[RMDB]
RNA sequence: GGGAACGACUCGAGUAGAGUCGAAAAUCAAGCCGUUUCGACGGCUUGAACACUUUAGAGUCCUGAGGGACUACGAUCCAGAGUACGGGUGGAACUCUAAGGCCUAGCCCUGCUUCGGCAGGGCUAACGAAUCUGGUAUGUUCGCAUACCAGAUUCGAAAAGAAACAACAACAACAAC
Reactivity to DMS in 0.01 (KOAc 150mM, MgCl2 10mM, bicine 150mM(pH8.5), 24C), signal-to-noise 2, nucleotides 027 to 126: u000c000a010a010g010c020c010g020u000u010u010c230g000a040c000g000g000c010u000u000g020a010a020c200a180c000u000u010u000a020g010a030g000u000c010c010u010g020a300g050g000g010a040c010u000a000c070g010a140u020c110c040a180g010a080g010u000a040c080g040g010g030u010g010g000a050a040c030u010c000u010a020a020g000g020c040c030u000a000g010c010c010c000u010g010c010u000u030c200g030g030c000a000g010g010g010c000u000a010a020
Reactivity to 2A3 in 0.01 (KOAc 150mM, MgCl2 10mM, bicine 150mM(pH8.5), 24C), signal-to-noise 2, nucleotides 027 to 126: u020c000a000a000g000c020c000g000u050u050u120c230g140a020c020g000g020c010u000u000g000a000a010c010a010c000u040u000u050a010g000a000g000u020c010c020u040g100a190g050g130g020a010c050u180a130c170g130a200u040c050c070a040g010a020g170u080a050c040g060g000g120u130g070g070a080a040c000u000c010u010a020a020g030g000c010c010u010a010g000c000c000c000u000g000c000u040u030c160g050g000c030a010g000g020g000c000u010a000a000
The record gives the reactivity of an RNA of 177 nucleotides to DMS and 2A3.
The reactions ran in a buffer of 150 mM KOAc, 10 mM MgCl2 and 150 mM bicine (pH 8.5), at 24 C.
DMS adducts were read by reverse transcription with MarathonRT.
The 2A3 profile rests on 2,781 reads.
Source: RMDB library M2PK50, as collected in RNAgym.
The DMS profile rests on 1,675 reads.
Values are in units of 0.01, from 0 to 300, in steps of 10.